The data come from the RNA Mapping Database (RMDB), library OK2TRN. Structure probing data (2A3 and DMS) for a 177-nucleotide construct. For DMS, 992 sequencing reads were counted. For DMS the reverse transcriptase was MarathonRT. In probing experiments dimethyl sulfate is read out at A N1 and C N3, which are open when not base-paired. The 2A3 profile rests on 1,725 reads.
[RMDB]
RNA sequence: GGGAACGACUCGAGUAGAGUCGAAAAACGUGCGAAAGCACGUUGGACGUCGUAGGAUAUGUAGGAUAUUCCUACAUGAGGAUCACCCAUGUUCACAUGGAAGAAGGACAGAAGGACGAUGUCCAUAGAUGAUCCCACGGUUCGCCGUGGGAUCAUCAAAAGAAACAACAACAACAAC
Reactivity to 2A3 in 0.01 (KOAc 150mM, MgCl2 10mM, bicine 150mM(pH8.5), 24C), signal-to-noise 2, nucleotides 027 to 126: a000c000g000u000g000c000g070a130a020a050g000c000a000c000g020u000u020g000g000a030c010g030u010c010g020u010a020g040g040a060u020a000u190g010u000a020g040g040a040u020a120u300u200c000c000u010a010c010a000u010g000a020g110g020a080u030c010a040c020c020c020a010u000g090u150u090c150a150c010a150u070g040g000a040a050g060a070a040g130g010a030c040a050g050a070a070g100g020a000c020g000a000u000g030u000c000c030a000u060a020
Reactivity to DMS in 0.01 (KOAc 150mM, MgCl2 10mM, bicine 150mM(pH8.5), 24C), signal-to-noise 1, nucleotides 027 to 126: a120c000g030u000g020c000g000a030a090a210g030c000a020c000g000u010u020g000g010a080c000g010u000c010g040u000a070g020g000a070u010a020u000g000u000a040g020g020a160u010a160u000u000c000c000u000a030c000a000u010g000a110g020g010a120u030c050a170c130c000c000a060u000g000u010u000c210a100c070a050u000g020g000a130a100g010a080a050g020g030a030c070a080g000a150a140g000g000a030c020g000a000u000g000u000c000c000a080u030a070